[RMDB]
The record gives the reactivity of an RNA of 177 nucleotides to DMS.
RNA sequence: GGGAACGACUCGAGUAGAGUCGAAAAGAUGGCAUCCAAGGGAAAGGGUCUUCUGGCAGUUGAUGAGUCUACCAAGACCAUCGGAAAGAGACUUGCAGGCAUCGGAGUUGAGAACACUGAGGCAAACAGGUUAUCCGUUGUUCGCAACGGAUAACCUAAAAGAAACAACAACAACAAC
Reactivity to DMS in 0.01 (KOAc 150mM, MgCl2 10mM, bicine 150mM(pH8.5), 24C), signal-to-noise 1, nucleotides 027 to 126: g000a090u000g000g000c030a060u000c010c070a120a160g000g010g000a040a100a110g000g000g000u000c030u010u030c070u000g000g030c110a070g020u000u000g000a010u030g040a080g010u020c040u000a110c300c280a080a110g010a030c000c020a000u000c040g000g000a010a050a070g030a090g000a040c010u000u020g010c060a090g000g010c080a000u000c060g000g010a110g010u000u000g010a090g000a050a060c130a030c000u000g010a050g020g030c060a010a050a120c160
Overview:
It was measured as part of the RMDB library OK2TRN. The reactions ran in a buffer of 150 mM KOAc, 10 mM MgCl2 and 150 mM bicine (pH 8.5), at 24 C.